Chemical mapping of a 177-nucleotide RNA with DMS. For DMS, 918 sequencing reads were counted. The reactions ran in a buffer of 150 mM KOAc, 10 mM MgCl2 and 150 mM bicine (pH 8.5), at 24 C. It was measured as part of the RMDB library M2PK90. Reactivities are given for positions 27 through 126.
RNA sequence: GGGAACGACUCGAGUAGAGUCGAAAAUUAAUCCGGCUUUAAGUUGACGAGGGCAGGGUUUAUCGAGACAUCGGCGGGUGCCCUGCGGACUUCCUGCGACCGUUAGAGGACUGGUAAACCAAUUUAAGUUAUAGAUGCCUUUCGAGGCAUCUAUAACAAAAGAAACAACAACAACAAC
Reactivity to DMS in 0.01 (KOAc 150mM, MgCl2 10mM, bicine 150mM(pH8.5), 24C), signal-to-noise 1, nucleotides 027 to 126: u000u000a080a090u010c050c020g020g000c020u000u000u010a040a100g030u000u010g020a080c070g000a030g010g000g020c060a050g030g000g010u010u000u000a020u000c050g040a100g040a060c130a060u000c040g010g020c060g000g010g020u000g000c070c030c020u000g000c060g000g000a080c150u000u010c020c010u000g000c020g000a080c060c060g010u000u010a110g000a090g020g020a070c020u010g000g000u000a020a090a120c060c020a070a120u000u010u000a060a120